[RMDB]
RNA sequence: GGGAACGACUCGAGUAGAGUCGAAAACCGUGACAUUGCGAAAGCAAGGCUGGCGGUAGGUAGUCCUGGGCGGCGACAGCCUUGGACUGCGGCGUAAGGGUGUACCUGGGGCCGUUAAACCUAUCGUGAAAGGCAACUUGGUUCGCCAAGUUGCCAACUUGAGUGUAGUGUUCGCACUACACUCAAGAAAAGAAACAACAACAACAAC
Reactivity to DMS in 0.01 (KOAc 150mM, MgCl2 10mM, bicine 150mM(pH8.5), 24C), signal-to-noise 2, nucleotides 027 to 156: c020c000g030u020g010a050c070a070u000u010g000c010g010a220a100a240g030c020a040a010g050g040c020u010g010g000c050g000g020u010a010g030g020u000a060g040u000c000c000u000g000g030g010c020g010g070c080g010a150c280a250g030c000c000u000u010g010g010a020c010u000g020c000g030g010c040g000u000a160a080g020g000g020u020g010u010a060c040c010u000g000g030g020g010c000c000g000u000u000a040a070a210c000c000u000a020u000c040g000u000g010a020a060a150g000g020c020a010a010c020u000u000g020g000u000u010c300g030c040c000a020a080g010u000u000g020c000c000a010a000
Reactivity to 2A3 in 0.01 (KOAc 150mM, MgCl2 10mM, bicine 150mM(pH8.5), 24C), signal-to-noise 3, nucleotides 027 to 156: c010c000g050u020g050a070c140a230u040u010g020c020g080a160a030a010g020c030a030a010g030g080c120u080g060g020c010g000g000u010a000g000g010u010a010g000u010c000c000u030g000g010g000c020g080g050c120g060a060c100a050g010c000c000u000u020g000g000a000c000u000g000c000g000g000c000g020u060a000a020g070g020g020u250g090u290a170c000c000u040g000g000g200g000c000c000g000u000u100a080a160a020c000c000u000a000u010c010g020u030g070a090a040a010g000g000c000a010a000c010u010u000g010g030u090u090c160g000c120c000a000a000g000u000u000g010c000c000a000a010